RNA sequence: GGGAACGACUCGAGUAGAGUCGAAAAAAGCUGGGCUAAUUUUUGUAUUUUUAGUAGAGACAAGGUUUCACCAUGUUGGCCAGACUGGUCUUGAACUCUUGACCUCAUGAUCUGCAUGCCUGAGCCUCCCAAAGUGCUGGGAUUACAAGCGUGAGCAGUAUAUUAUAUGAUUCGUCAUAUAAUAUACAAAAGAAACAACAACAACAAC
Reactivity to 2A3 in 0.01 (KOAc 150mM, MgCl2 10mM, bicine 150mM(pH8.5), 24C), signal-to-noise 2, nucleotides 027 to 156: a000a000g050c100u070g020g040g040c010u050a150a010u030u110u150u200u080g040u030a170u020u110u050u130u170a090g040u060a020g060a000g010a080c010a090a020g010g030u000u090u000c050a050c030c000a040u110g030u040u280g050g020c210c130a140g030a060c060u050g090g010u080c040u030u050g040a020a060c020u010c020u180u080g010a050c010c000u030c050a030u060g050a060u020c000u040g070c030a050u060g000c030c000u030g050a000g000c000c000u010c010c020c000a070a080a020g110u120g100c050u000g000g000g020a030u040u060a050c030a110a000g010c030g080u040g040a010g030c020a000
Reactivity to DMS in 0.01 (KOAc 150mM, MgCl2 10mM, bicine 150mM(pH8.5), 24C), signal-to-noise 1, nucleotides 027 to 156: a100a120g020c040u020g050g020g010c020u020a050a050u000u020u020u000u010g000u000a030u000u010u000u000u020a080g030u000a100g020a090g000a090c020a090a050g020g020u000u000u000c040a060c000c040a050u010g000u000u000g010g000c040c030a070g010a070c030u000g020g030u000c060u000u010g020a110a070c080u000c030u010u000g000a050c030c020u000c030a050u000g000a120u000c020u000g070c020a100u000g000c050c000u010g000a110g020c020c010u010c000c030c010a010a040a100g000u000g040c020u000g000g000g000a110u000u000a030c010a050a060g000c070g020u000g020a100g030c010a210